[RMDB]
RNA sequence: GGGAACGACUCGAGUAGAGUCGAAAAGAUUUUGCGCCUACUCCGCGAUAGUAGCUUUAUUUUUGACUGCAAUUGUCAUGAUUGCCUUUUAUUUUGCCUGUACUAGGCUUGAGUACUUUAUUUGAAAGGGAAUCAUAAUCUUCGGAUUAUGAUUCCCAAAAGAAACAACAACAACAAC
Reactivity to DMS in 0.01 (KOAc 150mM, MgCl2 10mM, bicine 150mM(pH8.5), 24C), signal-to-noise 1, nucleotides 027 to 126: g010a120u050u000u000u000g000c010g000c090c010u010a030c030u040c030c120g020c060g000a110u050a020g050u070a050g000c000u000u060u000a030u020u030u030u070u040g000a150c060u020g000c040a040a060u000u010g000u000c190a100u020g000a080u060u000g000c000c010u000u000u000u000a020u010u010u000u000g010c060c060u000g010u060a090c050u010a050g000g000c010u000u010g010a040g020u000a030c110u040u020u050a020u030u020u020g000a080a120a130
Reactivity to 2A3 in 0.01 (KOAc 150mM, MgCl2 10mM, bicine 150mM(pH8.5), 24C), signal-to-noise 4, nucleotides 027 to 126: g080a010u060u060u140u170g030c020g000c010c010u020a070c000u010c020c030g050c050g050a040u070a040g130u060a040g050c030u100u140u080a110u070u090u060u030u040g060a040c020u050g050c050a110a180u180u080g060u130c080a030u120g020a040u030u090g060c000c010u070u190u070u060a150u060u160u070u130g060c000c000u070g010u140a110c080u040a030g000g050c000u010u060g000a000g000u020a010c000u020u120u250a180u120u110u070g130a110a060a020